[RMDB]
RNA sequence: GGGAACGACUCGAGUAGAGUCGAAAAAUAAUACUUCUUACGCUUUAGCUGCCUAAAAACCAGCGGGCGUGACCCGAUUCGGAUUGCUUGUGUCUGAUGACAGGUCUUAUUAUUAGCAAGCUACGGUAGAAUCUUGUCUAGUGAUUUUACAAGAGAUAUGUCGAUUAAAGUUCGCUUUAAUCGACAUAAAAGAAACAACAACAACAAC
Reactivity to 2A3 in 0.01 (KOAc 150mM, MgCl2 10mM, bicine 150mM(pH8.5), 24C), signal-to-noise 3, nucleotides 027 to 156: a000u250a010a040u090a070c040u060u170c020u070u050a020c010g020c020u050u080u160a060g000c000u000g020c000c020u050a090a090a040a040a030c000c000a000g010c000g020g010g000c000g010u010g000a000c020c000c020g000a000u010u010c010g010g000a000u000u070g010c010u010u010g000u010g010u030c010u000g000a010u000g020a000c030a060g000g000u010c010u080u100a100u090u030a090u020u160a040g000c000a000a000g000c020u000a000c000g010g010u010a010g020a020a020u010c020u090u220g120u090c060u080a070g100u010g130a000u010u010u000u000a020c010a020a000g020a000g100a030u020
Reactivity to DMS in 0.01 (KOAc 150mM, MgCl2 10mM, bicine 150mM(pH8.5), 24C), signal-to-noise 1, nucleotides 027 to 156: a090u010a060a050u000a070c110u040u000c110u000u010a070c000g000c030u000u000u010a190g080c000u000g010c030c030u080a130a130a150a220a120c300c000a040g060c000g010g000g000c020g000u010g000a010c000c000c000g030a300u000u000c010g020g000a020u000u000g060c020u000u000g000u000g010u000c010u010g010a060u000g000a300c260a010g000g010u000c040u060u020a020u000u000a070u000u000a080g010c060a040a060g010c030u000a140c060g000g010u000a030g000a040a050u010c010u000u000g030u000c130u000a170g020u010g030a090u000u000u000u000a040c060a070a040g030a250g010a110u010
Source: RMDB library ARCHII, as collected in RNAgym. Chemical mapping of a 207-nucleotide RNA with 2A3 and DMS. For DMS, 1,673 sequencing reads were counted. For DMS the reverse transcriptase was MarathonRT.